This 177-nucleotide RNA was probed chemically with 2A3 and DMS. The RNA was probed in 150 mM KOAc, 10 mM MgCl2 and 150 mM bicine (pH 8.5) at 24 C. For DMS, 4,881 sequencing reads were counted. High 2A3 reactivity points to a flexible backbone, as in loops and unpaired stretches.

RNA sequence: GGGAACGACUCGAGUAGAGUCGAAAAGAAUCUCACUUGGGCGAAAGCUUUAGUGACUCCAGCGCGUAUUAGUGAGAUUAUGAAUACGUUGAAAUGAUUUGGGGAUUUAUGACGCGCAAAGUAAGAAGGGUUAACUAAUGUUCGCAUUAGUUAACCCAAAAGAAACAACAACAACAAC
Reactivity to 2A3 in 0.01 (KOAc 150mM, MgCl2 10mM, bicine 150mM(pH8.5), 24C), signal-to-noise 2, nucleotides 027 to 126: g030a020a040u000c000u000c030a010c000u020u030g000g020g000c020g060a120a130a030g030c000u040u070u120a100g060u050g060a110c000u020c010c010a090g030c050g000c000g000u050a020u040u000a140g050u070g090a040g000a020u000u130a060u060g180a050a010u110a160c160g040u120u070g060a130a080a010u130g050a060u010u060u090g070g010g060g000a000u110u060u030a130u160g000a000c010g000c010g000c030a010a000a040g010u050a010a060g010a180a100
Reactivity to DMS in 0.01 (KOAc 150mM, MgCl2 10mM, bicine 150mM(pH8.5), 24C), signal-to-noise 3, nucleotides 027 to 126: g000a090a050u020c040u000c000a000c000u000u000g000g000g020c030g000a140a060a070g020c010u000u030u020a040g020u000g000a080c050u030c040c060a160g000c030g000c000g000u010a030u010u000a020g010u030g000a020g000a050u020u020a040u010g040a110a090u010a060c130g000u030u030g020a060a100a040u010g000a060u010u000u010g000g000g000g020a140u030u000u040a030u020g010a010c000g000c000g000c020a080a020a090g020u020a090a090g000a110a160
Background
Values cover nucleotides 27 to 126. For DMS the reverse transcriptase was MarathonRT.